Conditions: 150 mM KOAc, 10 mM MgCl2 and 150 mM bicine (pH 8.5), 24 C.
An RNA of 207 nucleotides, treated with 2A3 and read out base by base.
Reactivities are rounded to 0.1 and cut off at 0 and 3.
Source: RMDB library OK3TST, as collected in RNAgym.
RNA sequence: GGGAACGACUCGAGUAGAGUCGAAAAAUUUCUGUGUCUGAAAGGGAAGCCCAGGUAUUUGCCUAGGAAGAAUAAGCACUUCCUAAUGACUCUGAGGCAGUUUGUCAGGCAUAUUUUGGAAAUGGUCAUAAAAAAGGGAAAUAACUCACAGACAAAACACUAAAUGAGGCUUCGGCCUCAUUUAGUGAAAAGAAACAACAACAACAAC
Reactivity to 2A3 in 0.01 (KOAc 150mM, MgCl2 10mM, bicine 150mM(pH8.5), 24C), signal-to-noise 2, nucleotides 027 to 156: a010u000u030u020c030u070g030u010g000u030c010u010g020a070a030a030g050g030g040a080a060g020c000c000c000a040g050g000u040a200u130u160u110g050c000c000u010a010g030g010a000a010g050a080a080u190a230a000g140c050a040c040u020u000c010c000u000a000a050u050g030a020c040u000c030u150g030a300g000g020c030a060g010u090u110u100g080u030c010a000g000g030c000a010u050a060u020u100u060u110g010g040a100a020a060u140g000g040u090c020a010u210a100a060a020a050a050a110g060g000g020a000a160a100u150a120a030c060u090c120a030c010a020g090a060c130a070a110a020a020